[RMDB]
RNA sequence: GGGAACGACUCGAGUAGAGUCGAAAACGCAGCAAUGGCGUAAGACGUAUUGAUUUUUCAGACAGUUAGCGGGCUGCGGGUUGCAGUCCUUACCGGUAGAUAGGAUCUUCUCUGGAGAGUAAUGCCCUUGCAUAAUUAGAUUCGUCUAAUUAUGCAAAAAAGAAACAACAACAACAAC
Reactivity to 2A3 in 0.01 (KOAc 150mM, MgCl2 10mM, bicine 150mM(pH8.5), 24C), signal-to-noise 9, nucleotides 027 to 126: c010g000c010a020g010c020a040a300u210g190g010c010g020u030a030a030g070a020c010g030u040a110u060u100g110a080u030u060u030u050u050c030a040g030a070c010a040g060u050u090a050g060c050g000g010g010c000u010g000c040g020g080g000u100u240g000c010a010g020u000c000c000u010u030a040c010c010g040g040u040a030g020a120u080a050g070g010a030u020c000u050u010c020u030c000u020g020g010a030g000a010g050u060a060a040u090g030c000c000c000
Reactivity to DMS in 0.01 (KOAc 150mM, MgCl2 10mM, bicine 150mM(pH8.5), 24C), signal-to-noise 9, nucleotides 027 to 126: c040g020c040a130g010c060a170a090u020g010g010c010g010u010a050a070g020a120c040g030u010a060u020u010g000a050u010u010u010u010u000c050a070g010a060c110a070g000u010u010a080g020c140g010g010g000c010u000g000c020g010g020g020u020u020g010c030a040g000u000c010c010u010u010a020c050c040g000g020u010a050g000a080u010a060g000g010a300u010c030u000u000c040u000c020u010g000g000a130g000a060g010u000a040a070u020g000c010c010c080
The record gives the reactivity of an RNA of 177 nucleotides to 2A3 and DMS. 2A3 adducts were read by reverse transcription with SuperScript II with manganese. It was measured as part of the RMDB libraries RFM100 and RFMREP. The RNA was probed in 150 mM KOAc, 10 mM MgCl2 and 150 mM bicine (pH 8.5) at 24 C. Values cover nucleotides 27 to 126.